Conditions: 150 mM KOAc, 10 mM MgCl2 and 150 mM bicine (pH 8.5), 24 C. Structure probing data (DMS and 2A3) for a 177-nucleotide construct.
RNA sequence: GGGAACGACUCGAGUAGAGUCGAAAAGAAAGAAAUCACUAUGUAACUGAGCAAUGAGUAAUCGGAUCAAAGCGGAUUGAUCUACGAAUAACUCGUAGUGAGUGAUCCAAUAUCCGUAUUAGAGAAAGGGUAACAAUGUCUUCGGACAUUGUUACCCAAAAGAAACAACAACAACAAC
Reactivity to DMS in 0.01 (KOAc 150mM, MgCl2 10mM, bicine 150mM(pH8.5), 24C), signal-to-noise 2, nucleotides 027 to 126: g010a070a120a190g010a010a290a060u000c000a140c070u010a150u000g060u000a160a100c060u030g000a070g000c100a120a130u000g000a040g000u000a120a030u000c000g000g040a000u000c100a030a090a000g010c160g000g040a050u000u000g000a050u000c000u000a000c010g050a050a280u000a300a070c160u000c010g190u020a000g000u000g010a300g040u050g050a000u030c000c030a040a110u090a000u000c030c000g000u080a000u000u030a100g000a070g000a050a150a090
Reactivity to 2A3 in 0.01 (KOAc 150mM, MgCl2 10mM, bicine 150mM(pH8.5), 24C), signal-to-noise 2, nucleotides 027 to 126: g070a000a090a000g100a020a010a050u170c030a040c080u100a070u160g120u180a150a020c090u280g140a100g010c000a110a040u130g000a070g090u030a020a030u030c010g040g000a000u000c100a000a000a130g120c040g030g000a000u020u010g010a000u000c000u030a030c070g050a000a070u130a160a010c040u000c000g000u000a000g000u010g060a070g000u210g010a000u040c000c000a020a070u080a000u050c000c000g070u060a000u150u250a080g110a020g000a200a060a010

Notes
For 2A3 the reverse transcriptase was SuperScript II with manganese. For DMS the reverse transcriptase was MarathonRT.